[RMDB]
RNA sequence: GGGAACGACUCGAGUAGAGUCGAAAAAAAAAGAUAUGGAUAUUCUACCCACCUCUUCGGGACGACGAAGCACUGUCGGAAACGACAGUGCAGAGUCCUCGAAGAGAGGAAUAUCCUAAGUCAAAAACACUCAAAUUAGGUUCGCCUAAUUUGAGUGAAAAGAAACAACAACAACAAC
Reactivity to DMS in 0.01 (KOAc 150mM, MgCl2 10mM, bicine 150mM(pH8.5), 24C), signal-to-noise 1, nucleotides 027 to 126: a010a070a050a120a130g010a100u000a200u020g000g000a030u000a000u000u000c020u040a290c020c000c020a300c080c000u000c000u020u000c000g000g010g020a070c180g070a040c050g020a300a220g000c000a000c010u040g010u000c000g000g000a090a070a140c010g020a110c000a000g000u000g060c030a000g000a300g000u000c040c000u000c000g000a000a020g010a030g000a020g000g000a000a020u000a000u040c020c020u020a000a090g050u020c130a010a020a190a110a150
Annotation
This 177-nucleotide RNA was probed chemically with DMS. The data come from the RNA Mapping Database (RMDB), library TTRDES. The RNA was probed in 150 mM KOAc, 10 mM MgCl2 and 150 mM bicine (pH 8.5) at 24 C. The DMS profile rests on 657 reads. Values cover nucleotides 27 to 126.